[RMDB]
RNA sequence: GGGAACGACUCGAGUAGAGUCGAAAAGUGGUCGUACGCGACCACAGGCAGCGUUCGCGCUGCCAAGGAGGACUACGGUCCUCCACUAGUUCUUCGGAACUAGAGGGCUUCGUUAGGUGAGGCUCCUGUAUGGAGAUACGCUGCUGCCCAAAAAUGUCCAAAGACGCCAAUGGGUCAACAGAAAUCAUCGACAUAAGGUGAUUUUUAAUGCAGCUGGAUGCUUGUCCUAUGCCAUACAGUGCUAAAGCUCUACGAUUGAAGCCCAUAAACCAAGGUUCGCCUUGGUUAAAAGAAACAACAACAACAAC
Reactivity to 2A3 in 0.01 (KOAc 150mM, MgCl2 10mM, bicine 150mM(pH8.5), 24C), signal-to-noise 6, nucleotides 027 to 266: g000u000g000g000u000c000g010u040a030c290g010c020g140a000c000c000a000c000a010g000g010c000a000g000c010g040u140u170c200g020c010g010c130u000g010c000c000a000a030g000g000a000g000g000a010c040u080a020c300g110g010u000c010c000u000c000c000a000c000u000a000g010u000u000c010u030u050c230g100g000a000a000c000u000a000g120a130g090g010g000c000u000u000c000g000u000u000a000g010g010u060g020a000g000g000c000u000c000c000u000g000u000a000u000g020g000a000g000a010u150a200c000g000c000u000g000c000u000g000c000c000c010a000a000a000a000a000u000g000u000c000c000a000a000a010g000a000c010g010c000c000a010a040u000g000g000g000u000c000a000a000c000a000g000a000a000a000u000c000a000u000c000g000a000c010a030u010a000a000g010g000u000g000a000u010u000u000u010u020a070a030u300g000c000a000g000c000u000g010g000a020u060g130c300u300u300g010u000c000c000u000a010u020g000c000c000a000u000a000c000a000g000u000g000c000u000a000a000a020g000c000u000c000u000a000c000g000a000u000u020g000a000a000g000c000c000c000a000u010a000
Reactivity to DMS in 0.01 (KOAc 150mM, MgCl2 10mM, bicine 150mM(pH8.5), 24C), signal-to-noise 5, nucleotides 027 to 266: g000u000g000g010u000c000g020u000a090c180g030c010g020a010c000c000a000c010a020g000g010c010a010g010c000g020u010u040c200g020c010g030c010u000g010c000c000a020a040g000g000a010g010g000a020c010u000a090c200g030g010u000c000c000u000c000c000a040c010u000a000g000u000u000c000u000u030c190g020g010a020a000c000u000a000g000a230g010g000g000c000u010u010c010g000u000u000a300g010g000u000g000a010g000g000c000u000c300c010u000g000u000a000u000g000g000a010g000a030u010a010c140g000c010u000g000c000u000g000c010c000c010a000a010a070a170a080u010g000u000c010c020a010a010a030g000a010c010g000c010c010a070a180u000g000g010g000u000c300a000a020c300a010g000a000a010a000u000c000a000u000c000g000a180c080a030u010a010a030g000g000u000g000a010u000u000u000u000u010a000a030u020g010c000a010g000c000u000g000g000a010u000g010c220u020u030g000u000c010c000u000a050u000g000c010c000a010u000a010c010a010g000u000g000c000u000a010a020a300g000c000u000c010u000a020c010g010a040u010u000g000a020a010g000c000c000c000a050u010a030